[RMDB]
RNA sequence: GGGAACGACUCGAGUAGAGUCGAAAACGAGAUGAGUUCGCUCAUCUCGAAACAACCGCGGGCGUGACUCGGUCAGAGCAUGACAGGCGCUGCGGUCACGAAAAAGUGGUGUGUUCGCACACCACAACUUCCCUUCAGAGUUCGCUCUGAAGGGAAGAAAAGAAACAACAACAACAAC
Reactivity to 2A3 in 0.01 (KOAc 150mM, MgCl2 10mM, bicine 150mM(pH8.5), 24C), signal-to-noise 1, nucleotides 027 to 126: c010g000a000g000a000u020g000a010g040u070u090c200g060c000u010c000a010u000c000u000c010g000a030a020a000c020a020a030c000c010g020c050g040g060g000c010g000u050g130a170c060u110c260g020g070u050c060a020g020a040g150c140a130u070g040a040c030a050g030g020c030g000c020u000g000c000g000g020u040c030a080c100g180a130a010a010a030a030g010u010g000g000u000g000u020g000u000u080c160g020c020a010c010a000c000c000a010c000a010a000
Reactivity to DMS in 0.01 (KOAc 150mM, MgCl2 10mM, bicine 150mM(pH8.5), 24C), signal-to-noise 1, nucleotides 027 to 126: c010g000a000g000a010u000g010a020g010u000u020c180g010c000u000c000a010u000c000u010c020g010a010a070a030c170a150a090c030c020g000c070g000g000g020c010g000u000g000a030c070u000c120g020g020u020c040a020g000a110g010c180a080u000g000a080c110a160g000g000c000g010c000u000g000c000g000g000u010c070a020c050g010a040a040a060a100a070g010u000g010g020u010g010u000g000u000u020c180g010c010a000c000a000c000c000a000c010a050a090

The record gives the reactivity of an RNA of 177 nucleotides to 2A3 and DMS.
High DMS reactivity at an A or C suggests that its Watson-Crick edge is free.
Reactivities are given for positions 27 through 126.
The reactions ran in a buffer of 150 mM KOAc, 10 mM MgCl2 and 150 mM bicine (pH 8.5), at 24 C.
For DMS the reverse transcriptase was MarathonRT.
The 2A3 profile rests on 2,932 reads.